This 170-nucleotide RNA was probed chemically with DMS and 2A3.
Source: RMDB library 15KLIB, as collected in RNAgym.
DMS (dimethyl sulfate) methylates the pairing face of unpaired adenines and cytosines.
DMS adducts were read by reverse transcription with MarathonRT.
2A3 adducts were read by reverse transcription with SuperScript II with manganese.
Conditions: 150 mM KOAc, 10 mM MgCl2 and 150 mM bicine (pH 8.5), 24 C.
The 2A3 profile rests on 3,231 reads.
For DMS, 12,819 sequencing reads were counted.

RNA sequence: GGGAACGACUCGAGUAGAGUCGAAAAUGGUAACAUGUUUAUUAAAUUUCCUGAAGUAGUAUUUGAAAGUACACUUAGGAUUACUAGAACUCUGUCAACUCAGUACUGCCGGUUCGGUAGUUGUGAGAUAGUCCGGAGUUCGCUCCGGACAAAAGAAACAACAACAACAAC
Reactivity to DMS in 0.01 (KOAc 150mM, MgCl2 10mM, bicine 150mM(pH8.5), 24C), signal-to-noise 5, nucleotides 027 to 129: u090g010g050u030a000a000c090a040u050g030u000u000u000a070u070u020a100a090a190u030u010u040c010c020u030g000a000a000g050u000a120g020u010a000u020u020u040g000a190a120a140g030u020a020c000a050c040u060u010a040g020g020a030u030u020a040c100u030a040g040a000a000c040u000c040u010g020u020c110a150a120c030u020c010a050g000u010a000c010u010g000c030c000g000g070u070u040c110g040g030u010a010g030u000u000g030u030g020a000g030a120u070a130
Reactivity to 2A3 in 0.01 (KOAc 150mM, MgCl2 10mM, bicine 150mM(pH8.5), 24C), signal-to-noise 4, nucleotides 027 to 129: u140g010g030u060a010a010c000a100u020g060u030u070u100a200u060u110a120a160a040u030u020u030c010c000u000g090a030a000g010u130a000g010u000a080u030u080u260g170a080a010a000g010u010a030c000a000c000u010u020a000g040g000a010u020u070a070c070u030a010g040a040a000c000u000c000u000g040u060c030a000a080c000u020c030a000g020u030a020c000u000g050c000c000g300g030u120u300c050g060g000u000a000g030u010u050g300u000g060a000g020a000u140a060